[RMDB]
RNA sequence: GGGAACGACUCGAGUAGAGUCGAAAAACAGUGGCGGUACUGGUACGCCAGUACCGCCACUGAAAGUUUAUCCAGGAAAGCUAUCGGACUGACGUUUGGUACCGAGCUGCCCUGGGAUAGACUCUAACUUAGAGUGGAUAUUCGUAUCCACUCUAAGAAAAGAAACAACAACAACAAC
Reactivity to 2A3 in 0.01 (KOAc 150mM, MgCl2 10mM, bicine 150mM(pH8.5), 24C), signal-to-noise 3, nucleotides 027 to 126: a000c010a020g000u000g040g000c010g030g000u000a000c000u030g000g010u040a030c300g030c060c000a020g010u010a010c000c000g000c000c010a000c000u000g000a000a000a000g000u000u000u000a000u000c000c000a000g030g010a030a020a000g010c030u050a120u220c010g000g000a020c000u060g060a150c160g300u180u250u300g060g000u140a300c010c000g010a000g000c010u020g000c010c000c000u010g000g000g000a000u000a000g000a000c000u000c030u110a090a110
Reactivity to DMS in 0.01 (KOAc 150mM, MgCl2 10mM, bicine 150mM(pH8.5), 24C), signal-to-noise 3, nucleotides 027 to 126: a080c000a000g040u000g010g070c010g020g040u000a000c000u000g010g030u010a080c230g010c030c030a010g030u000a000c010c000g020c010c060a000c000u010g000a010a060a090g010u010u000u000a000u000c000c000a010g000g000a100a300a020g020c000u000a060u010c030g000g000a140c010u000g020a140c300g000u000u020u020g000g010u010a060c020c020g010a090g020c010u010g000c300c000c010u000g000g000g000a000u000a000g000a000c010u000c070u010a060a250

The record gives the reactivity of an RNA of 177 nucleotides to 2A3 and DMS.
DMS adducts were read by reverse transcription with MarathonRT.
Values are in units of 0.01, from 0 to 300, in steps of 10.
Source: RMDB libraries RFM100 and RFMREP, as collected in RNAgym.